RNA sequence: GGGAACGACUCGAGUAGAGUCGAAAACAUUGGUGGGAUCAGCACCGUGCGGAUGCCGAGGGCGUCGGCCACCGCACAUGCGUGCUGACCGCCGGCGCCGCCGAACGUCGUCAGCGCGUACCGCGUCGUCAUUCCCUACGUUCGCGUAGGGAAUGACAAAAGAAACAACAACAACAAC
Reactivity to 2A3 in 0.01 (KOAc 150mM, MgCl2 10mM, bicine 150mM(pH8.5), 24C), signal-to-noise 2, nucleotides 027 to 126: c060a080u090u210g010g000u030g040g050g070a180u040c000a020g000c000a000c000c020g000u000g000c000g000g020a050u040g000c010c010g010a070g070g210g050c070g210u000c000g020g010c000c020a020c000c010g000c010a010c000a010u120g010c080g010u010g000c000u000g010a010c000c010g000c000c000g020g010c020g010c020c010g030c020c010g050a130a070c020g050u060c030g050u040c070a050g010c030g000c030g090u050a070c010c060g060c010g090u070c030
Reactivity to DMS in 0.01 (KOAc 150mM, MgCl2 10mM, bicine 150mM(pH8.5), 24C), signal-to-noise 2, nucleotides 027 to 126: c130a100u000u000g020g050u010g050g000g020a170u010c010a050g020c000a020c030c050g000u000g000c000g000g020a140u000g000c010c000g040a140g000g010g000c260g010u000c000g010g000c020c090a190c020c020g020c020a000c000a020u010g030c160g030u000g020c000u010g000a020c010c010g020c000c030g000g000c040g010c080c040g000c060c030g000a030a060c050g010u000c050g040u000c120a080g010c020g000c020g030u000a100c070c160g000c080g020u000c060